The record gives the reactivity of an RNA of 207 nucleotides to 2A3.
Reactivities are given for positions 27 through 156.
The data come from the RNA Mapping Database (RMDB), library OK3TST.
[RMDB]
RNA sequence: GGGAACGACUCGAGUAGAGUCGAAAACUUGGAAGACCUGGGGAGGGUUUCAGGAGUCUUCCUCUGGAGCCUGGGCCUGAAGAAGGGUGGCGCCUCAGCCAGGUGGGGCAAGAGAGACCCAUUCCAGGUCCCCACCCCAUCCAAGGCUCCCCAGCCAAUAUCGCUAUUAGUUCGCUAAUAGCGAUAUAAAAGAAACAACAACAACAAC
Reactivity to 2A3 in 0.01 (KOAc 150mM, MgCl2 10mM, bicine 150mM(pH8.5), 24C), signal-to-noise 1, nucleotides 027 to 156: c000u000u020g000g010a050a040g090a140c030c030u020g010g000g000g010a090g000g050g000u020u020u040c080a080g040g090a060g070u050c090u130u050c010c010u020c030u020g090g000a010g030c000c010u000g040g020g030c020c010u060g070a140a100g040a060a030g000g030g000u020g020g010c040g020c000c000u020c040a040g080c060c020a070g030g080u090g020g010g020g020c100a120a000g080a010g020a000g050a090c020c000c010a040u090u100c000c020a000g030g000u010c000c010c000c010a050c000c000c000c000a040u030c010c020a020a010g040g020c040u050c000c000c000c010a030g020c000c000a000